[RMDB]
RNA sequence: GGGAACGACUCGAGUAGAGUCGAAAACAGGACAUGCCCUUGCAUGGGAACACACACACAGAAACAUGGAGAUGCACACAGUGAGACACACGGGCACACACCUACCCAGGCCACAGGCCUGUGUGGGAAUAGGUGUUACAUUCGUGUAACACCUAUUAAAAGAAACAACAACAACAAC
Reactivity to 2A3 in 0.01 (KOAc 150mM, MgCl2 10mM, bicine 150mM(pH8.5), 24C), signal-to-noise 6, nucleotides 027 to 126: c030a020g030g080a020c020a070u090g020c010c050c000u060u160g060c050a080u080g010g000g090a110a010c030a000c000a000c010a000c000a010c000a050g090a070a110a000c030a040u090g060g020a110g010a060u080g040c050a010c000a000c010a050g050u030g110a060g050a030c010a000c000a010c060g020g020g010c020a010c010a000c010a010c020c010u010a010c010c040c010a000g010g000c010c010a300c090a230g030g000c000c000u000g000u000g000u010g000g000g000
Reactivity to DMS in 0.01 (KOAc 150mM, MgCl2 10mM, bicine 150mM(pH8.5), 24C), signal-to-noise 9, nucleotides 027 to 126: c070a110g000g000a100c070a050u000g010c020c040c050u000u010g010c040a050u000g010g000g000a120a070c070a050c050a060c060a050c050a050c060a030g000a080a100a060c060a060u000g010g010a110g010a070u000g000c040a040c070a050c050a060g020u010g010a090g000a080c050a030c040a050c060g000g000g000c050a050c090a060c130a180c010c010u000a020c020c030c010a030g010g020c010c010a100c230a110g000g010c000c010u000g010u000g020u000g010g000g000